[RMDB]
The record gives the reactivity of an RNA of 177 nucleotides to 2A3 and DMS. The reactions ran in a buffer of 150 mM KOAc, 10 mM MgCl2 and 150 mM bicine (pH 8.5), at 24 C. For DMS the reverse transcriptase was MarathonRT.
RNA sequence: GGGAACGACUCGAGUAGAGUCGAAAAUUGUGAGGCAAAAAGCAGAAAGCCCCGAAGUUAAUUCUCAUUAACCACGAGGCUUGAUCUGUAUGCCUAGACAACAUCAGAUUAGCCGCUUACCUGCCGAAGAGAGACUAUGUUUCGACAUAGUCUCUCUAAAAGAAACAACAACAACAAC
Reactivity to 2A3 in 0.01 (KOAc 150mM, MgCl2 10mM, bicine 150mM(pH8.5), 24C), signal-to-noise 6, nucleotides 027 to 126: u060u040g030u030g030a020g000g000c010a030a040a050a100a010g020c010a010g050a030a010a000g000c000c010c000c010g010a050a010g000u000u000a020a010u160u220c120u030c250a020u000u010a010a000c020c020a020c060g010a030g010g000c000u020u070g020a110u070c000u000g020u080a010u050g000c000c000u020a040g120a020c020a040a010c000a050u080c020a010g040a110u060u090a030g060c020c020g010c010u020u070a080c020c020u020g060c020c010g060a140
Reactivity to DMS in 0.01 (KOAc 150mM, MgCl2 10mM, bicine 150mM(pH8.5), 24C), signal-to-noise 4, nucleotides 027 to 126: u000u010g020u010g000a080g020g010c000a040a080a090a170a120g000c010a080g000a130a050a030g000c000c000c040c020g020a250a160g010u000u010a000a010u010u080c200u080c240a060u010u000a010a000c010c120a260c040g010a060g000g020c000u010u000g000a060u010c010u000g000u040a020u000g000c000c010u000a060g020a080c200a050a120c070a050u000c050a060g000a030u010u020a090g020c070c050g000c030u000u010a060c080c050u010g000c030c020g020a130